Chemical mapping of a 177-nucleotide RNA with DMS and 2A3. The DMS profile rests on 1,228 reads. For DMS the reverse transcriptase was MarathonRT.
RNA sequence: GGGAACGACUCGAGUAGAGUCGAAAAGUCCUGGUGGUACUUCACAAACCACGGGUCGUUGGCGGUCACGACAUGCCGCAGGGCCGUCACGCCCGUCGUGCCGGGACGGAAUUGCGGCAGGAGCUGAUCAGCAGGACCAGUUCGCUGGUCCUGCUGAAAAAGAAACAACAACAACAAC
Reactivity to DMS in 0.01 (KOAc 150mM, MgCl2 10mM, bicine 150mM(pH8.5), 24C), signal-to-noise 1, nucleotides 027 to 126: g000u000c000c000u000g020g020u000g030g050u000a080c180u010u020c110a150c240a120a110a020c050c090a050c010g010g000g030u010c080g000u000u010g020g010c000g010g000u010c000a080c070g000a120c060a100u000g010c050c000g020c040a050g010g000g000c000c000g030u000c000a010c010g020c020c010c010g030u000c190g000u000g010c130c000g050g000g020a000c000g010g000a100a090u020u000g020c000g000g010c020a060g000g010a110g000c080u000g010a160
Reactivity to 2A3 in 0.01 (KOAc 150mM, MgCl2 10mM, bicine 150mM(pH8.5), 24C), signal-to-noise 1, nucleotides 027 to 126: g020u000c010c010u030g040g020u050g030g090u290a130c070u200u300c100a070c110a170a130a060c080c000a020c010g000g020g030u180c070g090u110u060g000g000c010g010g000u020c040a010c180g080a040c060a150u140g040c040c010g000c010a000g000g000g000c000c000g000u010c000a000c010g000c000c000c010g060u000c020g060u040g000c020c020g000g030g000a000c020g040g040a060a060u080u100g020c030g020g060c040a030g020g050a000g030c010u010g040a040
The RNA was probed in 150 mM KOAc, 10 mM MgCl2 and 150 mM bicine (pH 8.5) at 24 C. Reactivities are given for positions 27 through 126. The data come from the RNA Mapping Database (RMDB), library OK2TST. 2A3 adducts were read by reverse transcription with SuperScript II with manganese.